The record gives the reactivity of an RNA of 207 nucleotides to 2A3 and DMS.
For 2A3, 1,154 sequencing reads were counted.
For 2A3 the reverse transcriptase was SuperScript II with manganese.
For DMS, 6,720 sequencing reads were counted.
DMS adducts were read by reverse transcription with MarathonRT.
The RNA was probed in 150 mM KOAc, 10 mM MgCl2 and 150 mM bicine (pH 8.5) at 24 C.

RNA sequence: GGGAACGACUCGAGUAGAGUCGAAAAUAUCCGUUUUCGAACGGAUAAUCAUUCCUAAGUCAAGCAAGUUGUCAGAACGAUAAGGGUCGGAAACGACCCUUUUGACGUUCUUGGAUUUAUGCUUGAUAUGGAUACAGGUACGCGUUCGCGCGUACAAUCCCUACAUCUUGUUCGCAAGAUGUAGGGAAAAAGAAACAACAACAACAAC
Reactivity to 2A3 in 0.01 (KOAc 150mM, MgCl2 10mM, bicine 150mM(pH8.5), 24C), signal-to-noise 1, nucleotides 027 to 156: u120a020u000c000c000g010u000u010u010u060c250g130a000a030c000g030g000a000u010a030a000u150c000a040u060u050c040c020u070a100a040g020u000c000a000a000g010c040a020a030g020u120u110g110u230c000a000g000a000a000c010g000a000u040a040a040g020g010g000u000c000g030g000a100a090a050c020g020a000c000c000c000u010u000u020u030g000a010c000g000u000u000c010u090u110g020g000a030u020u100u150a100u040g000c000u000u000g000a000u000a000u020g070g000a040u200a170c060a090g240g000u030a000c020g020c000g000u080u060c170g010c000g000c020g190u020a000c000a000a010
Reactivity to DMS in 0.01 (KOAc 150mM, MgCl2 10mM, bicine 150mM(pH8.5), 24C), signal-to-noise 3, nucleotides 027 to 156: u000a010u000c000c020g040u020u000u000u000c300g030a030a010c000g040g000a010u000a040a080u000c090a190u000u010c010c000u000a110a300g020u000c000a030a000g030c000a050a110g030u010u010g010u000c050a030g010a020a010c000g060a170u000a030a020g010g030g010u000c010g010g000a160a110a270c020g000a000c000c000c000u000u000u000u000g010a200c090g020u000u000c000u000u000g030g000a060u010u000u000a060u030g010c000u000u000g000a020u000a250u010g010g090a120u010a100c100a120g010g020u000a000c010g010c020g050u010u030c300g040c040g000c010g050u000a000c020a060a130